The data come from the RNA Mapping Database (RMDB), library OK2TST. The record gives the reactivity of an RNA of 177 nucleotides to 2A3 and DMS.
RNA sequence: GGGAACGACUCGAGUAGAGUCGAAAACUUCCAUCUCUGUCUGCAGAUUCACUUGGUGAGGAUGAGUUGGGUUUUAGGUAGAAGUAAAGAGCAUCAGUUACAUGUUUGCCUCUAGAAUGAAGAAGGAUACUGCAUUUGCAUUCGUGCAAAUGCAGUAAAAAGAAACAACAACAACAAC
Reactivity to 2A3 in 0.01 (KOAc 150mM, MgCl2 10mM, bicine 150mM(pH8.5), 24C), signal-to-noise 1, nucleotides 027 to 126: c000u060u000c010c010a070u010c020u010c000u010g070u040c010u030g030c010a010g000a110u080u080c030a000c040u070u110g120g040u110g050a050g030g030a040u060g010a020g030u100u080g030g010g010u030u100u030u060a060g000g020u070a000g000a130a000g050u150a070a130a060g050a020g000c010a000u000c040a010g040u060u040a070c020a070u020g050u100u060u020g020c010c000u010c000u030a130g120a220a110u230g020a020a030g030a020a020g110g040a020
Reactivity to DMS in 0.01 (KOAc 150mM, MgCl2 10mM, bicine 150mM(pH8.5), 24C), signal-to-noise 2, nucleotides 027 to 126: c130u000u010c010c010a070u000c030u000c030u000g050u000c020u010g010c080a110g010a120u010u000c050a060c040u010u010g010g000u010g030a150g000g020a080u000g010a080g000u010u010g000g020g000u000u000u000u000a030g030g020u010a070g000a100a080g010u000a020a060a060g000a120g040c010a030u000c050a060g000u000u000a090c170a150u020g000u000u000u000g000c070c010u000c060u000a040g000a090a110u000g030a070a090g000a080a080g020g010a160
For 2A3, 900 sequencing reads were counted. 2A3 adducts were read by reverse transcription with SuperScript II with manganese. The RNA was probed in 150 mM KOAc, 10 mM MgCl2 and 150 mM bicine (pH 8.5) at 24 C.